[RMDB]
RNA sequence: GGGAACGACUCGAGUAGAGUCGAAAACGAAGUCGCUGUGUCUCUGAGGGCUCCAAAGGAGAGGCUGGAGAUUGCGUCGGAGGAGAGGAAAGUGCCUUCGAUGAACCUGCUUCGCUGGCGCCGGCUGCUGGUCAUGCGCUUUCGAGCGCAUGACCAGAAAAGAAACAACAACAACAAC
Reactivity to 2A3 in 0.01 (KOAc 150mM, MgCl2 10mM, bicine 150mM(pH8.5), 24C), signal-to-noise 2, nucleotides 027 to 126: c060g050a060a030g040u020c000g000c040u030g040u020g020u080c010u000c050u030g170a190g000g080g050c000u080c030c000a290a080a060g130g040a050g050a040g000g000c000u030g000g060a060g010a140u110u240g030c000g000u000c020g000g030a010g000g010a020g000a060g030g150a180a180a020g110u200g210c000c000u020u030c000g000a000u000g000a010a000c000c000u000g020c000u030u020c010g050c130u010g000g000c000g000c000c020g080g000c010u050g000